[RMDB]
RNA sequence: GGGAACGACUCGAGUAGAGUCGAAAAGAUAUGGAACGAUCCGCCUGAAACGUAAGCAAGGCGUCGUGUGUCGGAAACGACAUCUUCGCUGAUGACCUUACGUUUCAGGCGGAGUCGUUCCUAAGUCGAGACUGUGUGGGUUCGCCCACACAGUCUCAAAAGAAACAACAACAACAAC
Reactivity to DMS in 0.01 (KOAc 150mM, MgCl2 10mM, bicine 150mM(pH8.5), 24C), signal-to-noise 1, nucleotides 027 to 126: g030a070u000a300u020g010g010a000a010c010g000a130u030c010c000g020c000c010u000g000a000a010a020c010g040u000a000a020g020c030a070a150g030g010c000g010u000c040g030u040g040u000g010u000c010g010g020a120a170a200c000g000a020c010a000u000c040u000u000c000g010c000u000g000a080u000g010a100c300c030u000u010a000c020g010u010u000u010c000a000g000g000c040g000g030a000g000u000c000g000u000u000c010c000u000a050a190g000u020c100
An RNA of 177 nucleotides, treated with DMS and read out base by base. The DMS profile rests on 1,067 reads. For DMS the reverse transcriptase was MarathonRT. Values are in units of 0.01, from 0 to 300, in steps of 10.